Annotation:
The data come from the RNA Mapping Database (RMDB), library RSTRND. This 207-nucleotide RNA was probed chemically with 2A3. Reactivities are given for positions 27 through 156. For 2A3, 948 sequencing reads were counted.

RNA sequence: GGGAACGACUCGAGUAGAGUCGAAAACGUGGGUUCGGAGUCGCAGCGGGGCAUGUCGAGCUGAAUGCGCUCGUAAAACAGAUUCAAACAAACUAACUGCAAACGACGAACGUUUCGCACUCGCUGCUUAAUUGCCAGUGAGCCUUGCAACAGUUGGGCGUAAAUCUUUGUUCGCAAAGAUUUACGCAAAAGAAACAACAACAACAAC
Reactivity to 2A3 in 0.01 (KOAc 150mM, MgCl2 10mM, bicine 150mM(pH8.5), 24C), signal-to-noise 2, nucleotides 027 to 156: c040g020u080g010g070g000u040u030c030g040g010a070g060u100c060g040c030a000g030c020g030g000g030g000c030a040u100g040u100c020g000a000g000c000u090g100a110a060u050g060c060g010c040u000c020g080u060a000a010a010a000c030a010g070a000u100u110c000a070a110a110c050a090a070a020c110u100a030a080c010u050g000c010a020a100a000c000g070a010c030g030a210a030c020g050u040u020u050c110g010c030a070c040u000c000g000c000u000g000c020u020u050a080a100u280u050g110c050c000a020g010u020g090a000g000c020c000u010u150g000c010a030a040c010a040g000u050u010g010g010
Reactivities are rounded to 0.1 and cut off at 0 and 3.